[RMDB]
An RNA of 207 nucleotides, treated with 2A3 and read out base by base.
It was measured as part of the RMDB library OK3TST.
The 2A3 profile rests on 752 reads.
For 2A3 the reverse transcriptase was SuperScript II with manganese.
RNA sequence: GGGAACGACUCGAGUAGAGUCGAAAAAUGCAAAUUUUGACAUUGCUUAGGGUAAGGACAAACAUGUUUACUUGAUCAGCUGUUUUCUUCAUUUCUAAGAGCUUGGGUGUGAGGAAGAGGAUUGGCACUUUCCAGAACUGUCAUGCCAUAGUGCUGACCUCCGACGAGGAUUCGUCCUCGUCGGAGGAAAAGAAACAACAACAACAAC
Reactivity to 2A3 in 0.01 (KOAc 150mM, MgCl2 10mM, bicine 150mM(pH8.5), 24C), signal-to-noise 2, nucleotides 027 to 156: a000u150g000c050a070a050a060u090u200u160u120g040a050c040a060u010u070g010c020u080u040a040g060g000g000u020a000a060g040g040a010c050a070a050a010c010a060u180g000u040u070u150a090c060u080u080g020a120u090c100a040g000c010u000g050u060u040u030u000c020u010u030c000a080u010u100u050c020u040a110a000g000a000g040c010u020u040g020g010g000u030g050u070g020a060g020g000a020a020g030a020g030g000a080u050u080g040g000c000a000c070u040u070u010c020c080a010g000a110a060c050u040g060u070c010a090u130g010c000c010a090u070a030g020u100g090c020u040g000a000